[RMDB]
RNA sequence: GGGAACGACUCGAGUAGAGUCGAAAAGAUAUGGAGCGUGGGGGUUCAACAGCUGGUCGGUCGGAAACGACCGCCAGACAUGAACUCUUGCGCUCCUAAGUCAAACUGCAGAGUUCGCUCUGCAGAAUCGUAAUUAUGCGUUCGCGCAUAAUUACGAAAAAGAAACAACAACAACAAC
Reactivity to 2A3 in 0.01 (KOAc 150mM, MgCl2 10mM, bicine 150mM(pH8.5), 24C), signal-to-noise 2, nucleotides 027 to 126: g030a020u080a030u150g000g000a020g000c010g020u020g000g040g000g020g010u000u030c040a070a070c060a220g110c010u020g020g130u300c150g020g000u000c010g070g000a060a080a050c040g000a010c010c000g020c000c000a010g010a000c000a070u050g000a000a000c000u000c030u020u000g010c010g000c010u010c000c000u000a000a000g000u000c000a040a020a020c010u000g000c000a010g000a020g040u060u170c270g170c110u000c000u010g000c010a000g000a000a060
Reactivity to DMS in 0.01 (KOAc 150mM, MgCl2 10mM, bicine 150mM(pH8.5), 24C), signal-to-noise 2, nucleotides 027 to 126: g000a050u000a300u010g000g000a020g020c010g050u000g010g000g000g000g030u000u010c000a050a120c300a230g010c000u010g000g030u010c050g070g040u000c000g000g010a080a080a270c040g010a000c000c020g000c010c010a000g000a010c140a160u000g020a000a000c000u020c000u000u000g020c000g010c030u000c000c000u010a010a030g010u000c030a110a140a300c010u000g000c000a010g010a030g000u000u020c250g000c010u010c000u000g010c000a000g000a050a070